[RMDB]
RNA sequence: GGGAACGACUCGAGUAGAGUCGAAAAUAUCAUGUCUUUCCAAGUUGGUCGAGUUUUGGCGAAAAAUGUGGACGACAACUACACGAUGGCACACGUCAACACCAGCACACAUUCGAGUGAAGAUCCACAAGAACGUAUCUUUCGAGAUACGUUCUUGAAAAGAAACAACAACAACAAC
Reactivity to 2A3 in 0.01 (KOAc 150mM, MgCl2 10mM, bicine 150mM(pH8.5), 24C), signal-to-noise 4, nucleotides 027 to 126: u130a040u060c060a060u090g040u020c020u040u070u000c010c010a060a070g080u080u040g080g010u050c040g020a080g030u030u050u070u100g060g000c060g090a090a000a010a030a050u110g030u050g040g030a040c030g020a020c030a050a040c030u080a020c070a020c070g080a080u140g040g000c010a000c000a000c070g030u020c020a030a030c020a030c030c000a000g040c020a000c000a000c010a090u050u090c030g000a000g020u060g040a060a020g040a040u020c000c010a030
Reactivity to DMS in 0.01 (KOAc 150mM, MgCl2 10mM, bicine 150mM(pH8.5), 24C), signal-to-noise 6, nucleotides 027 to 126: u020a080u010c100a070u010g010u000c060u000u000u000c030c030a100a140g010u010u010g010g010u000c030g010a100g010u000u000u000u000g010g010c120g000a040a050a030a060a070u010g010u010g000g010a110c150g020a080c090a040a070c090u010a080c080a060c090g010a080u000g000g000c060a030c070a080c060g000u000c060a030a060c070a060c050c030a050g010c060a090c090a050c090a060u000u000c050g010a070g020u010g020a100a080g000a090u010c010c040a160
The data come from the RNA Mapping Database (RMDB), library OK2TST. Structure probing data (2A3 and DMS) for a 177-nucleotide construct. For 2A3 the reverse transcriptase was SuperScript II with manganese.